An RNA of 207 nucleotides, treated with 2A3 and DMS and read out base by base. The RNA was probed in 150 mM KOAc, 10 mM MgCl2 and 150 mM bicine (pH 8.5) at 24 C.
[RMDB]
RNA sequence: GGGAACGACUCGAGUAGAGUCGAAAACUGCUGUUUCGACAGCAGAAAAAGGGGUCGUAUACCUGUGAGGGACAUGCUCUGAAGCCUCCACGGAGCAACAGCCUCCCCACCACAGGGUACGACGGAGGCACCCAAAAAAAGGCUGUUCGCAGCCUAAUCUAGAAGUGUAUUUCGAUACACUUCUAGAAAAAGAAACAACAACAACAAC
Reactivity to 2A3 in 0.01 (KOAc 150mM, MgCl2 10mM, bicine 150mM(pH8.5), 24C), signal-to-noise 4, nucleotides 027 to 156: c000u000g010c000u010g040u040u130u150c240g130a030c000a000g000c010a010g110a040a040a010a000a000g210g010g040g000u010c010g000u020a010u090a300c020c010u060g000u050g020a300g020g010g010a020c040a070u030g000c000u000c000u010g030a110a030g000c010c000u010c000c000a010c000g000g000a000g030c000a030a110c060a080g070c000c110u040c010c010c000c040a300c190c050a000c000a000g000g010g000u000a000c000g000a000c000g000g000a000g000g000c010a040c000c000c000a010a070a040a000a030a000a050g010g020c020u060g030u140u100c220g040c140a000g000c000c000u000a010a030
Reactivity to DMS in 0.01 (KOAc 150mM, MgCl2 10mM, bicine 150mM(pH8.5), 24C), signal-to-noise 2, nucleotides 027 to 156: c010u020g040c010u000g020u000u000u000c220g010a120c020a030g000c030a040g000a010a030a070a090a060g020g010g030g030u000c030g010u000a070u000a100c000c020u010g030u000g020a130g020g020g020a080c030a300u000g000c000u000c000u010g000a140a110g000c020c020u010c010c010a300c020g020g000a060g050c000a040a120c050a240g030c000c050u000c020c020c000c170a120c070c010a090c020a070g000g010g050u000a020c020g020a020c000g000g020a030g010g010c030a180c000c000c000a000a020a040a140a040a130a130g010g020c010u000g000u020u000c230g040c040a050g020c020c020u000a020a080
2A3 adducts were read by reverse transcription with SuperScript II with manganese.